[RMDB]
RNA sequence: GGGAACGACUCGAGUAGAGUCGAAAAGAUGGCUCGUGCAGGUCGCGUGAGCCAACCGCGAUGGUCUCUGGCGGUGCCAGGGCACCCCAUCGCUUCGCGUUUCGGGUUGCGCGAGCUAAGGGGUGUGGCGCCUAGCUUCGUUCGCGAAGUUAGGCGCAAAAGAAACAACAACAACAAC
Reactivity to DMS in 0.01 (KOAc 150mM, MgCl2 10mM, bicine 150mM(pH8.5), 24C), signal-to-noise 2, nucleotides 027 to 126: g000a080u020g000g000c000u000c000g060u010g040c000a120g050g000u020c220g030c010g040u000g000a000g020c060c080a010a000c080c010g000c110g000a100u020g010g000u010c010u040c000u030g000g020c000g010g010u020g000c040c000a030g000g030g010c080a020c040c000c000c000a120u020c260g000c000u000u010c000g000c000g000u000u020u010c120g000g010g000u010u000g010c000g000c010g000a010g000c000u020a120a180g010g000g030g010u000g000u000g010
Reactivity to 2A3 in 0.01 (KOAc 150mM, MgCl2 10mM, bicine 150mM(pH8.5), 24C), signal-to-noise 6, nucleotides 027 to 126: g140a080u120g000g000c000u010c010g020u050g010c030a090g070g300u270c060g050c010g020u020g020a020g040c010c000a000a000c010c000g040c030g090a090u140g060g070u040c020u010c010u050g030g000c070g170g100u150g030c000c020a020g010g020g000c010a030c000c000c000c000a010u050c040g000c000u120u100c000g000c000g020u040u120u130c140g030g050g020u080u070g000c000g000c000g000a000g000c000u020a090a080g000g010g000g000u020g010u040g040
Chemical mapping of a 177-nucleotide RNA with DMS and 2A3.
The RNA was probed in 150 mM KOAc, 10 mM MgCl2 and 150 mM bicine (pH 8.5) at 24 C.
For DMS, 3,823 sequencing reads were counted.